An RNA of 177 nucleotides, treated with DMS and 2A3 and read out base by base. The reactions ran in a buffer of 150 mM KOAc, 10 mM MgCl2 and 150 mM bicine (pH 8.5), at 24 C. It was measured as part of the RMDB library OK1LIB. For DMS the reverse transcriptase was MarathonRT. For 2A3, 2,709 sequencing reads were counted. For 2A3 the reverse transcriptase was SuperScript II with manganese.
[RMDB]
RNA sequence: GGGAACGACUCGAGUAGAGUCGAAAAGAAGGUAAAACAGCCUGUGGGUGAAUCACACCCACAGGGCCCAUUGGGCGCUAGCACUCUGGUAUCACGGUACCUUUGUGCGCCUGUUUUACCCAGAAAAGGUGCCUAAUACUUUCGAGUAUUAGGCACCAAAAGAAACAACAACAACAAC
Reactivity to DMS in 0.01 (KOAc 150mM, MgCl2 10mM, bicine 150mM(pH8.5), 24C), signal-to-noise 1, nucleotides 027 to 126: g010a180a120g010g030u010a000a000a000a000c010a020g030c010c000u020g020u000g010g000g020u040g000a080a110u000c100a210c010a010c000c000c000a000c010a020g060g000g010c000c000c000a040u010u070g010g000g000c030g010c000u110a050g030c010a010c020u010c000u000g010g020u000a000u000c040a130c260g070g000u000a000c000c030u000u000u010g020u000g020c000g030c050c010u000g000u060u000u000u000a000c000c000c040a090g000a090a030a160a030
Reactivity to 2A3 in 0.01 (KOAc 150mM, MgCl2 10mM, bicine 150mM(pH8.5), 24C), signal-to-noise 2, nucleotides 027 to 126: g090a030a060g000g010u000a010a010a000a000c010a010g000c000c000u010g000u010g000g040g000u020g040a070a050u180c020a060c000a000c130c000c000a000c000a000g000g010g000c000c000c000a040u300u300g010g000g010c010g020c090u100a040g000c010a000c000u000c000u000g020g000u000a000u030c050a050c190g130g000u000a000c000c000u000u000u000g000u010g000c000g010c000c000u000g000u000u000u000u000a000c010c000c000a000g030a000a090a010a040